[RMDB]
RNA sequence: GGGAACGACUCGAGUAGAGUCGAAAAGAUAUGGACCCACUCCCCACCAGAAUCCCACCUGCAGCGACGAAGAAGCUCGGAAACGAGCUUCAGAGCUGAAGUGGGAUUCUGAGGUGGGUCCUAAGUCCUCCAUAAACAGGUUCGCCUGUUUAUGGAGAAAAGAAACAACAACAACAAC
Reactivity to DMS in 0.01 (KOAc 150mM, MgCl2 10mM, bicine 150mM(pH8.5), 24C), signal-to-noise 1, nucleotides 027 to 126: g000a270u000a130u010g000g050a020c000c000c000a070c000u000c210c000c000c050a300c120c000a010g000a050a020u010c000c040c020a010c050c100u000g000c030a000g000c000g010a170c300g050a070a180g000a080a000g000c000u000c050g000g010a150a200a300c000g000a000g020c010u000u000c010a020g000a070g000c030u010g010a130a110g010u010g010g000g000a000u000u000c020u020g000a030g020g000u000g000g000g010u010c000c000u040a000a150g000u000c040